Chemical mapping of a 177-nucleotide RNA with DMS and 2A3. Reactivities are given for positions 27 through 126. For 2A3, 1,168 sequencing reads were counted. For DMS the reverse transcriptase was MarathonRT.
RNA sequence: GGGAACGACUCGAGUAGAGUCGAAAACGUAGUUUCGAAAAGCGGACGGCCACGACGGCCCUUUGGGUGGGGUUGCAGCCGUAGCGCAUCGCAAAGACGCCGAGGUCACCCACGCAACCCACAUCGCUUGUAGCAGGGUUUUCGAACCCUGCUACAAAAAAGAAACAACAACAACAAC
Reactivity to DMS in 0.01 (KOAc 150mM, MgCl2 10mM, bicine 150mM(pH8.5), 24C), signal-to-noise 2, nucleotides 027 to 126: c030g000u000a100g000u000u010u000c000g040a000a070a100a020g000c020g000g000a000c010g010g000c030c110a070c100g030a250c050g010g000c000c010c000u050u030u050g000g020g000u000g000g020g000g000u000u000g000c000a300g040c000c000g030u000a060g030c000g020c010a030u000c040g000c170a000a010a010g010a040c050g010c050c000g010a070g000g000u000c020a110c010c020c120a040c030g000c050a020a030c010c010c000a140c200a040u020c030g010c110
Reactivity to 2A3 in 0.01 (KOAc 150mM, MgCl2 10mM, bicine 150mM(pH8.5), 24C), signal-to-noise 2, nucleotides 027 to 126: c010g050u050a040g040u030u020u000c010g000a020a010a000a040g010c000g040g000a000c010g000g020c020c020a150c120g180a080c060g010g030c000c000c000u090u150u180g250g000g040u160g010g020g000g020u050u030g030c030a000g000c000c000g000u020a010g010c010g000c000a000u020c000g040c040a080a120a000g070a070c040g030c010c030g020a000g030g000u020c020a050c020c040c000a030c040g000c010a090a030c000c010c000a000c000a070u090c050g060c130